[RMDB]
RNA sequence: GGGAACGACUCGAGUAGAGUCGAAAAUACCUUGAGUAUUGCUGAAUUCAGUUUAGUGUGCAUGCUCUUGGCUAUUCUCAUAGUGAUUGUCAAAUUUGGAGUUACUUAUUCGUCAAUUCAAUAUUUAAAAAGGUGCCGAUGUUCGCAUCGGCACCAAGAAUCGAUAGAACUUCGGUUCUAUCGAUUCAAAAGAAACAACAACAACAAC
Reactivity to 2A3 in 0.01 (KOAc 150mM, MgCl2 10mM, bicine 150mM(pH8.5), 24C), signal-to-noise 2, nucleotides 027 to 156: u060a000c000c000u000u000g010a020g020u000a140u300u170g000c050u000g090a260a170u110u110c090a110g270u070u080u210a200g020u180g000u040g080c000a000u010g000c000u000c040u000u010g030g030c000u050a080u040u000c010u030c010a040u040a050g150u150g040a040u010u080g040u030c040a010a040a030u030u040u070g040g000a120g080u110u030a120c010u040u130a090u040u040c010g000u000c020a000a030u040u100c060a020a040u100a230u190u250u300a080a180a060a020a100g000g040u000g020c000c000g000a000u030g010u020u100c160g000c100a000u010c000g000g000c000a000c000c000a000a010

Annotation:
Structure probing data (2A3) for a 207-nucleotide construct.